RNA sequence: GGGAACGACUCGAGUAGAGUCGAAAAACUGCGGUAUUCGUACCGCAGUACAUAAAAAGGAUAAAAUACCAGUAGCCCGAAACCCAAGCGAGCACUACUGGCGCAAGAACCACUUCGGUGGUUCUAAGUUCAACAACACAUUCGUGUGUUGUUGAACAAAAGAAACAACAACAACAAC
Reactivity to 2A3 in 0.01 (KOAc 150mM, MgCl2 10mM, bicine 150mM(pH8.5), 24C), signal-to-noise 3, nucleotides 027 to 126: a000c010u010g010c010g020g010u010a040u040u100c130g040u050a010c000c000g000c010a000g000u010a010c000a020u300a030a140a010a000a010g140g020a090u260a230a220a080a040u160a180c000c000a010g010u000a000g000c010c030c010g000a060a040a030c000c010c000a020a010g060c070g070a010g030c050a000c070u010a000c010u020g040g000c050g030c070a050a020g010a000a000c000c000a020c030u050u120c240g090g000u010g000g000u000u010c000u000a000a010
Reactivity to DMS in 0.01 (KOAc 150mM, MgCl2 10mM, bicine 150mM(pH8.5), 24C), signal-to-noise 2, nucleotides 027 to 126: a010c000u000g000c000g040g010u000a040u000u040c210g010u000a000c000c000g020c000a010g020u000a060c170a060u000a040a020a100a090a080g000g000a110u000a110a060a050a080u020a100c020c010a010g000u010a010g000c200c000c010g000a020a020a080c010c000c020a140a080g010c020g000a010g000c130a110c060u000a010c030u000g000g000c170g030c240a220a060g000a010a000c000c000a020c010u000u000c140g010g010u000g000g000u000u000c000u000a010a150
Conditions: 150 mM KOAc, 10 mM MgCl2 and 150 mM bicine (pH 8.5), 24 C. Structure probing data (2A3 and DMS) for a 177-nucleotide construct. The DMS profile rests on 1,305 reads.